Structure probing data (2A3) for a 177-nucleotide construct.
2A3 adducts were read by reverse transcription with SuperScript II with manganese.
RNA sequence: GGGAACGACUCGAGUAGAGUCGAAAAAUAAAGUCGGAGACAUUUGUGACACCUAUGCGAGCUAUAAAAUAGACAAACAGAGCUUUGCAGAAUUCACCAUGUCGUCACAAAAAGCCUUCUAUACCACGCUCGCUGGAAGAUUCGUCUUCCAGCGAGCAAAAGAAACAACAACAACAAC
Reactivity to 2A3 in 0.01 (KOAc 150mM, MgCl2 10mM, bicine 150mM(pH8.5), 24C), signal-to-noise 2, nucleotides 027 to 126: a000u080a000a040a000g070u030c000g000g090a060g030a060c020a070u010u000u020g000u000g030a000c000a000c000c000u040a050u070g000c000g000a000g000c000u080a130u280a060a000a100a090u120a160g220a040c070a000a040a000c030a000g240a000g050c000u120u200u300g010c040a090g020a130a150u240u230c160a120c210c050a020u230g020u050c160g000u000c020a000c000a000a070a000a000a000g020c000c000u010u000c000u000a050u110a090c050c030a010c080
Description:
For 2A3, 431 sequencing reads were counted. The reactions ran in a buffer of 150 mM KOAc, 10 mM MgCl2 and 150 mM bicine (pH 8.5), at 24 C.